RNA sequence: GGGAACGACUCGAGUAGAGUCGAAAAGAUAUGGACUGUUUCGACAUGAGUGCCCGGGAGUCGGAAACGACUCCUCACUCAACAGCGAGAACAGUCCUAAGUCAAAAGUAAUGGUUCGCCAUUACAACUAUAUGAAGGUCUUCGGACCUUCAUAUAGAAAAGAAACAACAACAACAAC
Reactivity to DMS in 0.01 (KOAc 150mM, MgCl2 10mM, bicine 150mM(pH8.5), 24C), signal-to-noise 6, nucleotides 027 to 126: g010a050u010a300u010g010g000a010c000u000g010u000u000u000c010g000a070c050a270u000g010a000g020u000g030c300c170c180g010g000g010a010g000u010c000g010g010a090a040a170c010g000a010c010u000c000c000u000c000a000c000u010c000a040a080c300a120g010c020g000a090g010a030a010c000a020g010u000c000c000u000a010a060g010u010c040a100a070a080a110g000u000a000a000u000g010g010u000u000c290g010c010c000a000u000u000a010c000a110a200
Reactivity to 2A3 in 0.01 (KOAc 150mM, MgCl2 10mM, bicine 150mM(pH8.5), 24C), signal-to-noise 3, nucleotides 027 to 126: g020a010u060a060u160g010g000a000c010u000g030u060u060u040c070g040a150c050a150u160g010a010g000u020g050c110c260c000g050g010g010a000g010u000c000g010g000a070a070a010c010g010a000c010u000c000c000u010c010a000c010u010c000a050a100c070a040g110c020g000a070g080a130a010c000a010g000u000c000c000u000a010a010g040u020c040a070a000a010a140g000u010a000a020u000g020g040u040u120c270g090c060c000a010u010u000a000c010a040a030

About this RNA
Chemical mapping of a 177-nucleotide RNA with DMS and 2A3. The reactions ran in a buffer of 150 mM KOAc, 10 mM MgCl2 and 150 mM bicine (pH 8.5), at 24 C. For 2A3, 5,524 sequencing reads were counted. 2A3 is a SHAPE reagent: it acylates the 2'-hydroxyl of flexible nucleotides of all four kinds. The data come from the RNA Mapping Database (RMDB), library TTRDEL. The DMS profile rests on 3,887 reads.